[RMDB]
RNA sequence: GGGAACGACUCGAGUAGAGUCGAAAAUCCUUUCUCGAUAGAGAUUGGAGUCAUACAACCCCAGAAACCAUUCCUUAUACCUUGAGUAUUGCUAAAUUCAGUUUAGCGUGCAUGCUCUUGGCUAUUCAUACCAAGGACAACUUCGGUUGUCCUUGAACUUUGUAGUCCAGUUCGCUGGACUACAAAGAAAAGAAACAACAACAACAAC
Reactivity to 2A3 in 0.01 (KOAc 150mM, MgCl2 10mM, bicine 150mM(pH8.5), 24C), signal-to-noise 4, nucleotides 027 to 156: u000c000c000u020u000u000c060u020c030g180a300u180a270g000a000g010a000u000u000g010g000a000g070u040c010a030u080a230c070a050a090c030c010c000c010a020g150a060a060a030c060c020a100u120u150c040c000u080u100a040u030a130c000c010u010u000g000a010g000u020a070u130u160g030c000u020a000a020a050u140u210c080a120g110u010u030u020a010g030c010g020u080g010c010a000u010g000c000u000c000u000u000g000g000c000u060a050u060u160c060a070u090a250c060c000a010a000g000g000a000c000a000a000c000u060u070c140g070g000u000u000g000u010c000c000u000u000g000a000a000
Reactivity to DMS in 0.01 (KOAc 150mM, MgCl2 10mM, bicine 150mM(pH8.5), 24C), signal-to-noise 2, nucleotides 027 to 156: u000c000c000u010u010u000c000u000c000g010a300u000a190g010a030g010a050u000u010g060g010a020g010u000c100a210u010a110c060a100a160c040c000c020c020a160g000a170a120a040c130c050a170u010u000c000c010u000u000a160u000a050c000c020u000u010g020a060g040u020a050u000u000g000c000u000a010a040a050u000u000c220a200g030u000u000u000a010g020c000g030u000g040c150a280u000g040c000u000c000u000u000g000g000c000u000a100u000u010c060a140u010a120c120c000a010a010g030g000a010c000a040a020c010u000u010c260g010g000u000u000g020u000c020c000u000u000g000a020a080